[RMDB]
RNA sequence: GGGAACGACUCGAGUAGAGUCGAAAAGACGCCUGUGUGGCGAAGCGAGCAUGAGAAAGAGCCGCACAGUCCAUCUAAUAUAAAGCGGCCAGAUGGAUUGCUCGCCAAAAGAUCCAUAUCACUGAGAAGGAGUAGUAUUAUUCGUAAUACUACUCCUAAAAGAAACAACAACAACAAC
Reactivity to 2A3 in 0.01 (KOAc 150mM, MgCl2 10mM, bicine 150mM(pH8.5), 24C), signal-to-noise 5, nucleotides 027 to 126: g090a010c030g040c020c000u130g040u060g070u160g060g000c000g030a030a020g000c000g000a010g000c010a020u050g010a000g110a070a150a020g040a040g030c010c000g010c010a040c030a040g080u010c040c010a090u040c040u180a160a180u120a120u060a200a190a020g040c010g040g010c000c000a040g010a090u070g020g020a000u000u030g000c000u000c000g000c010c000a000a090a010a020g040a030u010c020c000a030u080a030u190c130a140c110u090g050a060g030a240
Reactivity to DMS in 0.01 (KOAc 150mM, MgCl2 10mM, bicine 150mM(pH8.5), 24C), signal-to-noise 7, nucleotides 027 to 126: g010a180c060g020c000c010u010g010u040g010u050g000g010c020g010a130a140g000c000g010a010g010c010a010u000g000a300g000a050a070a160g000a240g010c010c000g030c010a130c120a110g000u030c090c110a050u040c060u030a070a070u050a100u020a080a110a100g010c020g010g010c010c040a100g000a160u010g000g000a100u010u000g000c020u000c010g000c000c110a020a030a070a080g010a120u040c010c010a080u020a100u040c110a070c080u010g000a110g000a190
Chemical mapping of a 177-nucleotide RNA with 2A3 and DMS. DMS adducts were read by reverse transcription with MarathonRT. Conditions: 150 mM KOAc, 10 mM MgCl2 and 150 mM bicine (pH 8.5), 24 C. Reactivities are given for positions 27 through 126.